[RMDB]
RNA sequence: GGGAACGACUCGAGUAGAGUCGAAAAUCUUGUGAUAUCAGGAACUAAAAAAAACAAAGCAACGGCUGCCUUAGGCGCGAUUUCUACGGGAACUUCGAAGGAUAAUCUCCAAAGAAUGGUUGCUGUACAUACGGAUUCAUUUCGAUGAAUCCGUAUGAAAAGAAACAACAACAACAAC
Reactivity to DMS in 0.01 (KOAc 150mM, MgCl2 10mM, bicine 150mM(pH8.5), 24C), signal-to-noise 3, nucleotides 027 to 126: u000c000u000u020g000u000g010a120u000a110u010c030a050g000g020a070a140c100u010a000a020a010a060a090a060a110a120c110a050a100a050g030c040a010a020c060g000g020c030u000g040c000c020u000u000a070g030g010c040g010c040g000a090u000u010u000c010u000a060c280g020g000g000a010a060c090u010u000c010g000a130a160g000g000a030u000a050a120u000c260u000c010c040a040a190a110g000a010a030u010g000g000u000u000g010c000u000g020u000a180
Reactivity to 2A3 in 0.01 (KOAc 150mM, MgCl2 10mM, bicine 150mM(pH8.5), 24C), signal-to-noise 3, nucleotides 027 to 126: u030c010u020u080g010u040g070a180u090a090u300c020a020g000g030a050a100c090u190a070a030a040a020a010a010a010a010c020a040a070a010g060c020a000a020c010g170g000c060u120g010c040c010u080u150a120g050g010c020g010c000g050a050u010u080u020c010u060a010c080g050g000g020a020a020c030u040u030c030g020a070a000g010g000a030u040a100a100u050c070u030c070c000a030a070a020g040a020a030u080g100g030u030u000g000c020u010g040u020a030